[RMDB]
RNA sequence: GGGAACGACUCGAGUAGAGUCGAAAAGAUAUGGACCUUAGUUAUGGCACGAUUCAUGACAUGCUAGAGGGUCGGAAACGACCUGAUAGCAACAGCAUGAUCGUGCCAUAACUAAGGUCCUAAGUCACUCAAACAAUAACUUCGGUUAUUGUUUGAGAAAAGAAACAACAACAACAAC
Reactivity to DMS in 0.01 (KOAc 150mM, MgCl2 10mM, bicine 150mM(pH8.5), 24C), signal-to-noise 3, nucleotides 027 to 126: g000a050u010a300u000g010g000a010c000c000u000u000a010g020u000u000a000u000g000g050c000a020c000g000a010u000u010c020a010u000g010a070c070a290u000g010c000u000a010g020a300g010g010g010u000c000g000g000a060a100a300c020g020a010c000c000u010g010a300u000a010g010c020a000a050c220a080g010c020a020u000g000a020u000c000g000u000g000c010c000a000u000a000a000c000u000a010a000g000g010u000c000c000u000a000a030g000u000c040a290